This 177-nucleotide RNA was probed chemically with DMS.
The RNA was probed in 150 mM KOAc, 10 mM MgCl2 and 150 mM bicine (pH 8.5) at 24 C.
RNA sequence: GGGAACGACUCGAGUAGAGUCGAAAAGAUAUGGAAAACCAGGGCAAUCUGAAAGAAGGCAACAGCUUGGUCUCGGAAACGAGACCCAAGACAUGCCUCUUUCAGAUUGCCCUGGUUUUCCUAAGUCGAUUUCGUUAUUGUUCGCAAUAACGAAAUCAAAAGAAACAACAACAACAAC
Reactivity to DMS in 0.01 (KOAc 150mM, MgCl2 10mM, bicine 150mM(pH8.5), 24C), signal-to-noise 1, nucleotides 027 to 126: g000a110u000a300u030g020g000a000a000a010a010c010c000a020g020g000g030c010a020a000u000c000u040g020a000a010a020g010a100a070g020g000c020a040a110c210a160g000c020u000u010g020g020u010c000u000c000g020g010a060a100a250c020g010a000g000a020c170c060c020a000a000g010a050c080a200u000g010c000c000u000c020u000u000u010c000a000g000a010u000u000g020c000c000c000u010g000g000u000u000u000u000c000c000u000a020a080g020u010c130
For DMS, 1,467 sequencing reads were counted.